Record summary:
Chemical mapping of a 207-nucleotide RNA with 2A3. Values cover nucleotides 27 to 156. For 2A3 the reverse transcriptase was SuperScript II with manganese.
[RMDB]
RNA sequence: GGGAACGACUCGAGUAGAGUCGAAAAUUGCACCGGAAUCGGCUGAUUAAAAGUUCGUCGCCUCGGCGUGUCGACCAGCUAAAACACCAGGUCACGCUACCCAGUAGUGCUGUGUAGUGCUUGGUAGGAGUACCGGCUUGGGUACACCUGUGGGUACGCGAUUAAAUGACUUCGGUCAUUUAAUCGCAAAAGAAACAACAACAACAAC
Reactivity to 2A3 in 0.01 (KOAc 150mM, MgCl2 10mM, bicine 150mM(pH8.5), 24C), signal-to-noise 1, nucleotides 027 to 156: u090u060g030c020a020c020c030g000g030a040a070u070c090g000g000c020u040g030a160u070u240a080a110a000a000g030u070u070c040g050u040c040g010c010c020u040c040g110g010c100g020u030g060u040c040g010a020c020c000a000g000c050u070a140a050a000a000c070a020c040c010a000g020g000u050c080a060c090g000c000u000a010c030c060c010a000g050u110a010g040u080g220c010u000g020u040g010u080a040g010u000g020c050u000u060g030g050u000a090g000g040a080g060u000a050c000c040g040g100c150u150u150g070g000g000u040a000c020a030c000c000u020g010u180g050g010g030u060a020c010